[RMDB]
RNA sequence: GGGAACGACUCGAGUAGAGUCGAAAACACAAUUCGCUAAGCGAUGAGAAGCGUGUGGAAAAUUAGGGAAGGGCUACGGCUAUAAUCCUAAGAAAGCUUAUCUACAAGCGGAGGUAUUCUCAGAACGAAAACCAUUUGGCGUUCGCGCCAAAUGGAACAGUCCAUAAACGUUCGCGUUUAUGGACUGAAAAGAAACAACAACAACAAC
Reactivity to DMS in 0.01 (KOAc 150mM, MgCl2 10mM, bicine 150mM(pH8.5), 24C), signal-to-noise 1, nucleotides 027 to 156: c050a110c030a010a180u000u000c000g040c000u000a110a150g010c030g000a130u000g020a080g010a130a060g010c020g050u000g050u020g020g010a100a060a110a200u000u000a070g000g040g040a110a130g020g030g000c000u000a090c140g040g040c000u000a090u000a060a090u000c020c000u000a010a050g000a110a040a170g030c060u000u010a080u000c020u000a120c010a110a050g000c010g010g000a040g000g000u000a080u000u000c030u010c040a090g000a160a050c090g000a070a130a060a080c000c000a030u010u000u000g030g040c080g000u000u010c300g050c010g010c000c000a010a000a030u030g070g000a050a090
Reactivity to 2A3 in 0.01 (KOAc 150mM, MgCl2 10mM, bicine 150mM(pH8.5), 24C), signal-to-noise 3, nucleotides 027 to 156: c080a010c000a010a140u060u040c010g000c030u070a110a090g010c040g140a090u060g010a040g020a070a040g030c050g040u100g020u150g090g040a100a090a070a100u050u050a070g000g000g020a070a050g080g000g000c010u010a020c120g030g000c000u010a030u050a200a070u060c010c010u030a020a020g050a080a080a000g020c010u080u060a010u000c030u060a040c020a080a000g030c000g010g000a000g030g020u050a140u110u000c040u000c020a040g090a080a060c080g050a080a060a040a060c000c000a000u000u000u000g000g000c000g010u020u060c170g020c010g000c090c010a000a000a000u000g000g010a000a000